The record gives the reactivity of an RNA of 177 nucleotides to DMS and 2A3.
RNA sequence: GGGAACGACUCGAGUAGAGUCGAAAACAAACUGUUCAAGCAUCGUGUAGUCAAAGCCCACCGGGUUUGUCUCAUCUUCCAUCACGUGACCGUGCUCUGUGGUAUUUUCCUUCCAAUACGCUAGGCAGAUCUUCACACUCUUCGGAGUGUGAAGAUCAAAAGAAACAACAACAACAAC
Reactivity to DMS in 0.01 (KOAc 150mM, MgCl2 10mM, bicine 150mM(pH8.5), 24C), signal-to-noise 2, nucleotides 027 to 126: c080a100a060a120c140u010g000u000u010c040a030a150g030c050a050u000c120g030u000g000u010a090g030u000c030a070a070a110g030c050c020c030a140c120c050g000g030g000u000u000u010g020u020c020u000c050a080u000c040u000u000c000c060a050u010c080a040c090g030u000g010a060c080c050g020u000g000c020u000c030u030g000u000g010g030u010a030u000u000u000u000c010c010u020u000c070c040a030a100u000a060c150g000c040u000a070g010g000c120a070
Reactivity to 2A3 in 0.01 (KOAc 150mM, MgCl2 10mM, bicine 150mM(pH8.5), 24C), signal-to-noise 2, nucleotides 027 to 126: c030a010a040a030c030u090g050u190u100c090a090a050g060c020a060u060c080g050u030g070u150a040g050u080c010a070a130a060g070c030c000c030a040c040c050g070g000g000u050u070u040g060u000c020u000c020a100u040c020u090u120c050c010a040u050c030a010c040g030u020g080a030c000c050g040u040g020c000u000c000u010g070u050g010g050u040a090u030u040u000u000c010c000u040u050c020c000a050a030u090a050c060g000c020u010a050g080g000c010a020
2A3 adducts were read by reverse transcription with SuperScript II with manganese.
The RNA was probed in 150 mM KOAc, 10 mM MgCl2 and 150 mM bicine (pH 8.5) at 24 C.